[RMDB]
RNA sequence: GGGAACGACUCGAGUAGAGUCGAAAAGAUAUGGAGAUCAGGCUUUUGACGGAGCCCACUCGGAAACGAGUGGGACUCCGAUAAGCCUGUAUCUCCUAAGUCAAAGUUCUCUCUUCGGAGAGAACAACUCUUAUAAGAGGUUCGCCUCUUAUAAGAGAAAAGAAACAACAACAACAAC
Reactivity to DMS in 0.01 (KOAc 150mM, MgCl2 10mM, bicine 150mM(pH8.5), 24C), signal-to-noise 3, nucleotides 027 to 126: g000a010u000a080u020g000g000a030g010a000u000c000a010g010g000c000u000u000u010u000g010a210c130g010g000a020g000c000c000c000a000c000u000c000g030g000a020a010a040c010g030a020g020u000g010g000g010a020c010u000c010c000g010a020u010a010a010g020c000c000u000g010u020a000u000c000u000c000c000u000a000a060g000u010c010a130a140a170g000u000u000c000u000c000u010c010u000u030c260g000g000a020g000a020g000a010a000c010a090a110
Reactivity to 2A3 in 0.01 (KOAc 150mM, MgCl2 10mM, bicine 150mM(pH8.5), 24C), signal-to-noise 3, nucleotides 027 to 126: g010a010u010a010u070g000g000a020g000a010u010c000a000g020g020c030u130u210u300u300g300a280c130g000g000a000g000c000c000c020a000c020u010c010g010g010a000a000a000c010g010a010g000u020g020g010g000a000c010u000c010c000g000a010u000a010a000g010c000c000u000g000u020a000u000c000u000c000c000u000a010a000g000u000c000a090a090a090g000u000u020c000u000c000u010c010u030u080c300g140g000a000g000a000g010a010a000c000a010a000
Chemical mapping of a 177-nucleotide RNA with DMS and 2A3. For 2A3 the reverse transcriptase was SuperScript II with manganese. Source: RMDB library TTRDES, as collected in RNAgym. The DMS profile rests on 4,872 reads. Reactivities are given for positions 27 through 126. The RNA was probed in 150 mM KOAc, 10 mM MgCl2 and 150 mM bicine (pH 8.5) at 24 C.